[RMDB]
RNA sequence: GGGAACGACUCGAGUAGAGUCGAAAAGAUAUGGAUCCACUGGAGCGGACAUGGUCGGAAACGACCAUGAUCGCGAUGAAAGUGGAGUCCUAAGUCAAAUCGCCUGUGUGUUCGCACACAGGCGAAAGGUCUUAUCCUAGUUCGCUAGGAUAAGACCAAAAGAAACAACAACAACAAC
Reactivity to DMS in 0.01 (KOAc 150mM, MgCl2 10mM, bicine 150mM(pH8.5), 24C), signal-to-noise 2, nucleotides 027 to 126: g000a010u010a030u020g000g010a280u010c020c000a000c000u000g000g010a010g020c010g040g000a030c000a010u000g020g000u010c000g030g000a020a010a020c000g010a010c000c010a000u000g000a020u000c000g040c020g020a100u010g000a130a200a040g000u000g010g000a020g020u030c000c000u000a000a100g000u000c010a070a160a130u010c020g000c010c000u000g020u000g010u000g000u000u000c290g000c020a020c010a000c000a000g000g010c000g000a000a010a050
Reactivity to 2A3 in 0.01 (KOAc 150mM, MgCl2 10mM, bicine 150mM(pH8.5), 24C), signal-to-noise 1, nucleotides 027 to 126: g020a000u000a000u050g010g000a000u000c010c000a020c000u010g010g010a010g040c060g010g000a020c010a010u030g020g030u000c010g000g020a000a010a010c000g010a000c000c000a010u000g000a010u010c000g010c010g070a150u030g010a010a020a000g010u020g000g000a020g020u100c000c010u010a000a030g000u010c010a010a040a210u030c010g010c000c010u010g000u020g000u000g000u000u110c250g060c140a000c000a010c020a000g040g000c000g000a010a000a010
Conditions: 150 mM KOAc, 10 mM MgCl2 and 150 mM bicine (pH 8.5), 24 C.
The record gives the reactivity of an RNA of 177 nucleotides to DMS and 2A3.
For 2A3, 4,314 sequencing reads were counted.